RNA sequence: GGGAACGACUCGAGUAGAGUCGAAAAGGUAUGAUUAGGGUGAGACCUAGGAAGCGUAGGGGUAUUCUCAAAGGAAGCUUUUGCAGUGACGCCCAUGUAAGUGGGAUAUAACAACAGAACUCGUAUGUGUGGCACAGAGAGUUCGCUCUCUGUGCAACCGUAACAAGAACUUCGGUUCUUGUUACGGAAAAGAAACAACAACAACAAC
Reactivity to 2A3 in 0.01 (KOAc 150mM, MgCl2 10mM, bicine 150mM(pH8.5), 24C), signal-to-noise 2, nucleotides 027 to 156: g050g010u080a040u180g080a110u050u130a030g000g000g020u010g030a040g020a010c030c000u030a030g040g060a050a010g020c100g020u100a060g000g000g030g010u020a100u100u040c100u030c080a040a060a000g080g000a040a000g060c010u030u040u090u040g050c030a010g020u000g050a030c030g000c000c000c020a000u040g070u180a080a090g000u020g010g000g060a000u020a000u040a080a030c060a010a000c010a020g040a130a040c040u020c130g040u110a140u150g040u020g010u030g070g000c020a000c000a000g010a000g000a000g000u000u020c050g100c010u000c000u020c000u010g000u000g050c010a000a000
Reactivity to DMS in 0.01 (KOAc 150mM, MgCl2 10mM, bicine 150mM(pH8.5), 24C), signal-to-noise 1, nucleotides 027 to 156: g000g030u000a070u040g030a120u010u010a100g000g000g020u000g010a130g010a060c060c010u010a100g040g000a100a080g000c060g040u010a040g040g040g010g060u010a080u000u010c070u000c040a070a100a100g090g030a060a040g000c020u000u000u000u040g040c030a140g000u010g000a130c050g030c020c000c040a050u010g040u010a050a170g010u000g000g000g030a040u010a040u000a110a120c040a050a020c020a070g010a070a070c060u000c070g040u040a100u000g000u030g000u010g020g000c000a010c040a020g020a110g000a050g020u000u000c300g020c010u040c000u010c000u010g000u000g000c010a010a050